RNA sequence: GGGAACGACUCGAGUAGAGUCGAAAAUGUAAAUCAUAGCGAUGCAGCAAAUUACUUACAAACAAUUGUGCAUUUGGAUAAGAUCGCCCAUCACCACACACAAUAACUUUGCCACCUUGCAACAAACAAUGGAUAAGGUCUUCGGACCUUAUCCAUUAAAAGAAACAACAACAACAAC
Reactivity to DMS in 0.01 (KOAc 150mM, MgCl2 10mM, bicine 150mM(pH8.5), 24C), signal-to-noise 1, nucleotides 027 to 126: u030g010u010a090a030a060u000c020a080u000a160g000c030g000a010u040g030c020a090g040c080a050a020a050u000u000a070c090u000u030a150c160a080a050a120c200a030a100u000u010g000u030g030c070a100u000u000u010g000g000a100u000a020a070g010a170u000c070g000c050c050c000a130u000c050a060c030c030a050c090a030c100a010c070a010a030u020a090a040c120u000u000u000g010c020c030a060c050c080u000u010g000c060a040a050c160a060a050a100c240
Description: The record gives the reactivity of an RNA of 177 nucleotides to DMS. It was measured as part of the RMDB library OK2TST. The reactions ran in a buffer of 150 mM KOAc, 10 mM MgCl2 and 150 mM bicine (pH 8.5), at 24 C.